[RMDB]
Structure probing data (DMS and 2A3) for a 177-nucleotide construct. Source: RMDB library OK1LIB, as collected in RNAgym. The DMS profile rests on 2,100 reads. For 2A3 the reverse transcriptase was SuperScript II with manganese.
RNA sequence: GGGAACGACUCGAGUAGAGUCGAAAAAUUUCGUCAUGUAACUCGAGAUAGCGUCGGGCAAGGGACUUUAAUGAAAUGCGAUAAACGUUGGUUACAUUGCGGUAUUCACUGGCAUCAGGUCUCCAGGAUCUCACUUGGGGUUCGCCCCAAGUGAGAUAAAAGAAACAACAACAACAAC
Reactivity to DMS in 0.01 (KOAc 150mM, MgCl2 10mM, bicine 150mM(pH8.5), 24C), signal-to-noise 2, nucleotides 027 to 126: a110u020u010u000c000g000u030c040a040u010g010u000a010a050c050u000c030g000a040g000a080u000a030g040c070g020u000c030g010g000g000c040a080a080g000g010g000a080c060u000u020u070a080a080u000g000a050a050a100u020g000c070g010a070u040a100a130a030c120g010u020u030g010g000u020u000a040c110a050u010u010g060c040g000g030u000a040u000u030c080a070c000u000g000g000c090a050u040c060a130g000g020u020c030u000c000c040a070g000g020
Reactivity to 2A3 in 0.01 (KOAc 150mM, MgCl2 10mM, bicine 150mM(pH8.5), 24C), signal-to-noise 3, nucleotides 027 to 126: a000u030u060u040c010g040u030c000a010u200g060u020a090a060c010u010c060g030a000g000a030u130a050g050c030g020u030c010g000g020g010c040a050a080g100g000g060a080c000u040u120u090a020a050u100g070a110a010a050u180g020c020g120a080u090a080a070a010c020g040u070u080g110g020u050u000a010c000a050u040u100g020c020g020g010u010a070u040u060c050a050c020u020g010g040c000a040u030c050a050g020g020u010c020u010c040c010a030g030g050